[RMDB]
RNA sequence: GGGAACGACUCGAGUAGAGUCGAAAAGGAGCAUAUUAAGCUAUGUAAACGCCAACCACUGGAUUUAGUCUAUGGGGAUAUGGAAUGGAACACAGCAUGUGGAGCCCAGUACAAUGGAUUGAAAUCAAUAUUCCUAAGAGUUCGCUCUUAGGAAUAUAAAAGAAACAACAACAACAAC
Reactivity to DMS in 0.01 (KOAc 150mM, MgCl2 10mM, bicine 150mM(pH8.5), 24C), signal-to-noise 8, nucleotides 027 to 126: g000g010a140g020c030a030u020a070u040u040a090a120g030c120u000a040u010g000u000a050a110a070c100g010c010c010a050a090c030c020a030c050u010g010g000a020u010u010u020a110g000u010c020u000a040u020g020g000g000g000a100u010a080u010g000g000a050a070u020g000g010a100a060c050a030c050a070g000c050a080u020g010u010g000g010a110g000c040c010c020a060g010u020a060c180a080a080u020g000g000a080u010u030g010a030a050a100u020c120a050
Reactivity to 2A3 in 0.01 (KOAc 150mM, MgCl2 10mM, bicine 150mM(pH8.5), 24C), signal-to-noise 6, nucleotides 027 to 126: g070g010a090g020c040a010u040a080u190u220a120a020g040c030u020a020u080g050u100a040a120a050c040g010c030c010a010a040c000c020a030c040u040g040g010a050u010u080u180a100g040u060c010u030a090u100g030g000g020g010a030u070a100u190g060g040a030a060u090g050g020a030a010c040a000c000a050g130c020a070u080g030u050g040g020a040g010c010c010c010a010g040u080a060c070a070a080u100g070g020a060u010u150g080a080a030a000u070c040a010